[RMDB]
RNA sequence: GGGAACGACUCGAGUAGAGUCGAAAAGAUCCAUGUCGUCGUACGAUCUAGGUACCAUGUCUAGCAUGGCUAGUCCAUGACUGCUAGCUAGCGAUCUCACCAUGCGAUCAUGGAUCCAUGCGUACGCGCCGUGUGGUAAUUUCGAUUACCACACGGCAAAAGAAACAACAACAACAAC
Reactivity to 2A3 in 0.01 (KOAc 150mM, MgCl2 10mM, bicine 150mM(pH8.5), 24C), signal-to-noise 3, nucleotides 027 to 126: g030a050u040c020c010a020u060g130u140c060g000u020c000g020u020a040c040g010a100u060c060u120a130g080g020u050a100c000c030a050u060g040u000c090u060a030g000c030a100u070g030g020c070u100a020g010u000c060c060a110u160g050a110c030u050g000c020u000a030g000c030u050a010g020c020g040a110u040c030u040c050a060c030c000a050u080g030c020g050a050u080c000a020u010g000g010a020u000c000c000a050u110g040c030g060u050a040c050g020c030
Reactivity to DMS in 0.01 (KOAc 150mM, MgCl2 10mM, bicine 150mM(pH8.5), 24C), signal-to-noise 3, nucleotides 027 to 126: g000a090u000c010c010a040u010g000u020c110g020u010c070g040u020a070c060g010a150u020c100u020a160g000g000u000a200c100c070a060u010g000u010c060u000a110g000c010a040u010g000g030c080u000a030g010u020c030c130a200u000g010a060c060u020g020c030u000a050g000c030u010a050g010c050g000a060u010c030u010c190a070c080c050a110u000g010c010g000a070u000c000a050u000g010g000a080u000c000c080a120u000g000c050g020u010a070c110g000c140

The record gives the reactivity of an RNA of 177 nucleotides to 2A3 and DMS. For 2A3 the reverse transcriptase was SuperScript II with manganese. Conditions: 150 mM KOAc, 10 mM MgCl2 and 150 mM bicine (pH 8.5), 24 C. The 2A3 profile rests on 4,036 reads. The data come from the RNA Mapping Database (RMDB), library OK2TRN.